[RMDB]
RNA sequence: GGGAACGACUCGAGUAGAGUCGAAAAGAUAUGGAACACUAUGAAGGUGGUACCUAUGAAGUCGGAAACGAUGGAGGUAUCACUGGAGUGUUCCUAAGUCAAACUACGGACGUUCGCGUCCGUAGAAGUAUACAUAAACCUUCGGGUUUAUGUAUACAAAAGAAACAACAACAACAAC
Reactivity to 2A3 in 0.01 (KOAc 150mM, MgCl2 10mM, bicine 150mM(pH8.5), 24C), signal-to-noise 9, nucleotides 027 to 126: g020a010u070a040u170g000g000a010a000c010a000c020u160a300u300g040a050a020g010g000u000g000g000u010a000c000c000u270a300u300g040a020a010g020u000c010g020g020a060a050a050c020g000a000u030g030g030a000g000g000u000a000u010c000a000c010u000g000g010a000g000u010g000u000u000c000c000u000a050a000g010u010c050a080a050a080c010u000a000c000g000g000a000c000g000u050u070c300g020c010g110u000c000c000g000u000a000g000a000a000
Reactivity to DMS in 0.01 (KOAc 150mM, MgCl2 10mM, bicine 150mM(pH8.5), 24C), signal-to-noise 8, nucleotides 027 to 126: g010a030u000a300u000g000g000a010a000c000a010c010u000a200u010g000a140a190g000g000u000g010g010u000a000c000c000u000a240u010g000a100a200g000u000c000g000g000a120a090a150c010g000a010u000g000g010a010g010g000u000a000u000c000a010c000u000g000g000a020g020u000g010u000u000c000c000u000a010a070g010u000c030a100a120a200c000u000a000c010g000g000a010c000g010u000u010c260g010c010g010u000c000c000g000u000a000g000a010a080

An RNA of 177 nucleotides, treated with 2A3 and DMS and read out base by base. It was measured as part of the RMDB library TTRDEL. The reactions ran in a buffer of 150 mM KOAc, 10 mM MgCl2 and 150 mM bicine (pH 8.5), at 24 C. High DMS reactivity at an A or C suggests that its Watson-Crick edge is free.